[RMDB]
RNA sequence: GGGAACGACUCGAGUAGAGUCGAAAAGUGCGGAGUGAAAUUCAUAGGAGCCACGCCAAUUUGGCGCAACGGCCCGGUACUCCGCGUAGUCGCGACGUAAACGUUCUGUGUUGGCGUUCAGGCCUCAGCCUAAAUAUAUAUUCGUAUAUAUUUAGGCAAAAGAAACAACAACAACAAC
Reactivity to DMS in 0.01 (KOAc 150mM, MgCl2 10mM, bicine 150mM(pH8.5), 24C), signal-to-noise 2, nucleotides 027 to 126: g020u020g010c000g000g000a020g020u010g010a060a060a110u040u030c170a100u020a160g010g000a120g010c000c020a170c010g000c000c000a090a190u020u040u020g000g010c000g010c190a070a100c190g000g000c010c000c000g000g010u020a040c000u000c000c000g010c000g010u020a030g010u010c120g000c040g000a030c030g000u010a070a080a110c020g000u010u010c050u010g020u010g010u010u000g000g010c070g000u000u010c120a090g000g000c040c010u000c060a300
Reactivity to 2A3 in 0.01 (KOAc 150mM, MgCl2 10mM, bicine 150mM(pH8.5), 24C), signal-to-noise 5, nucleotides 027 to 126: g170u120g010c010g010g020a010g010u120g150a080a140a150u220u160c080a090u140a220g010g010a040g000c000c000a000c010g000c000c010a080a160u190u110u300g010g000c000g000c030a110a050c090g000g000c000c000c000g000g020u020a010c000u000c000c000g000c000g000u010a010g020u020c030g000c020g090a060c030g050u090a000a040a050c020g020u100u080c060u090g090u020g020u050u060g020g000c020g010u040u070c090a050g090g000c000c020u060c030a020